Source information: Chemical mapping of a 177-nucleotide RNA with 2A3. For 2A3, 364 sequencing reads were counted. As a SHAPE reagent, 2A3 marks flexible, mostly unpaired nucleotides at the ribose 2'-OH.
RNA sequence: GGGAACGACUCGAGUAGAGUCGAAAAUAUUAAAGGAGGAGUUUGGCCCACUUGCCCCUACCAGCGUGCAUGGCGAGGCUUUGAGACCACCUCGAGGCCAGGAGCACCGGAGGGCAUCACUAUGCACCUCCCGCUAUCCGUUCGCGGAUAGCGGGAGAAAAGAAACAACAACAACAAC
Reactivity to 2A3 in 0.01 (KOAc 150mM, MgCl2 10mM, bicine 150mM(pH8.5), 24C), signal-to-noise 1, nucleotides 027 to 126: u300a050u180u300a000a100a000g030g010a020g020g000a020g040u060u150u000g130g000c000c000c000a000c000u010u090g070c000c000c000c000u140a140c010c010a120g190c060g120u030g000c000a150u190g050g170c000g070a010g030g000c020u130u020u040g130a120g030a050c070c070a040c090c000u030c000g090a090g030g030c000c000a060g000g140a060g060c060a110c120c020g000g000a000g000g030g010c000a000u040c000a000c020u110a060u150g030c060a140c060